[RMDB]
RNA sequence: GGGAACGACUCGAGUAGAGUCGAAAAACGGCCGGCGCACGCUCGAGGCGGCGAUCGCAUCGCUGAUCUUCUUCGUCGGCCUGUGCUUCGUGAUCGAGGUCGCGCUCGCGCGGCCCGACUGGCACGACCGUGCACCUGGUUUCGACCAGGUGCACGGAAAAGAAACAACAACAACAAC
Reactivity to DMS in 0.01 (KOAc 150mM, MgCl2 10mM, bicine 150mM(pH8.5), 24C), signal-to-noise 2, nucleotides 027 to 126: a020c190g010g030c020c060g010g000c010g010c160a050c120g040c300u010c120g010a060g020g010c050g020g000c040g000a010u010c300g010c020a300u010c010g000c000u000g000a080u030c030u000u000c010u000u000c010g040u010c010g010g000c000c010u000g020u010g000c040u000u000c090g020u000g020a110u000c000g000a080g010g000u000c000g010c080g020c100u010c200g000c000g040c000g000g000c020c000c010g000a020c070u000g020g030c000a010c010g000a130
Reactivity to 2A3 in 0.01 (KOAc 150mM, MgCl2 10mM, bicine 150mM(pH8.5), 24C), signal-to-noise 1, nucleotides 027 to 126: a000c070g000g000c020c000g000g010c000g080c010a100c100g080c070u100c100g040a020g010g000c020g000g030c010g010a030u040c070g020c120a070u000c020g030c040u010g120a300u030c030u070u000c020u040u030c020g000u000c000g000g020c000c000u020g010u000g010c010u120u260c110g230u130g100a290u020c010g030a100g060g020u000c010g040c000g000c060u080c140g100c040g000c000g000g000c000c000c000g000a010c010u020g050g030c020a000c020g050a060